The record gives the reactivity of an RNA of 170 nucleotides to 2A3 and DMS. Reactivities are given for positions 27 through 129. The DMS profile rests on 5,470 reads.

RNA sequence: GGGAACGACUCGAGUAGAGUCGAAAAACUCGCUUAGGCAAGCAGCACUGCCCCAAUCUAAAGAUUCCAAUUUUUUAAACGAGUCCGGGGUUCUAUUGUAAAUGCCCGAAUAGAACCCUGUUCAAGUACAGCAAACACUUCGGUGUUUGCAAAAGAAACAACAACAACAAC
Reactivity to 2A3 in 0.01 (KOAc 150mM, MgCl2 10mM, bicine 150mM(pH8.5), 24C), signal-to-noise 3, nucleotides 027 to 129: a000c030u040c030g000c020u040u060a040g060g020c020a020a040g010c000a000g080c030a010c070u070g000c010c000c000c000a020a030u040c030u210a110a070a070g030a050u090u000c020c010a010a010u060u030u000u040u150u270a140a160a010c050g000a000g050u000c040c020g020g000g020g000u030u030c010u000a000u030u030g070u100a090a200a130u150g060c010c010c030g040a000a000u020a000g000a000a010c010c020c000u000g000u020u000c020a050a000g020u010a080c030a040
Reactivity to DMS in 0.01 (KOAc 150mM, MgCl2 10mM, bicine 150mM(pH8.5), 24C), signal-to-noise 2, nucleotides 027 to 129: a020c020u010c170g060c120u040u060a080g090g140c070a080a020g000c040a030g020c140a000c060u040g060c020c000c000c030a040a040u060c020u080a030a000a050g020a090u000u070c060c070a040a020u000u040u090u050u020u110a000a000a000c060g040a160g020u030c050c010g040g000g000g030u000u000c000u030a000u000u000g040u080a050a000a070u060g000c040c070c030g020a000a000u010a000g010a000a020c030c050c000u020g030u050u010c100a020a090g030u070a060c140a080
Reactivities are rounded to 0.1 and cut off at 0 and 3. It was measured as part of the RMDB library 15KLIB. Conditions: 150 mM KOAc, 10 mM MgCl2 and 150 mM bicine (pH 8.5), 24 C. The 2A3 profile rests on 7,518 reads.